[RMDB]
RNA sequence: GGGAACGACUCGAGUAGAGUCGAAAAGACCCACGUGAGCAGGGUCAAGGUAGGAGGUGCGGAUUCUACCAGUUCACGAAGUAACGCGUUUUCGAGUUCACGUGUUACAACCGCACAAGAACUCAGAGGGUAGGAACUAGUUCGCUAGUUCCUACCCAAAAGAAACAACAACAACAAC
Reactivity to 2A3 in 0.01 (KOAc 150mM, MgCl2 10mM, bicine 150mM(pH8.5), 24C), signal-to-noise 2, nucleotides 027 to 126: g020a020c000c010c000a000c000g080u130g050a080g040c090a060g060g020g060u060c130a090a070g080g010u030a000g000g020a030g000g050u010g020c010g000g000a000u020u000c000u020a000c000c000a010g040u020u040c020a030c140g050a120a000g030u140a070a010c020g000c010g010u000u060u030u080c120g040a050g020u020u080c010a000c010g010u000g000u050u050a030c030a070a000c010c000g000c000a000c000a040a000g010a000a000c030u030c120a040g070a040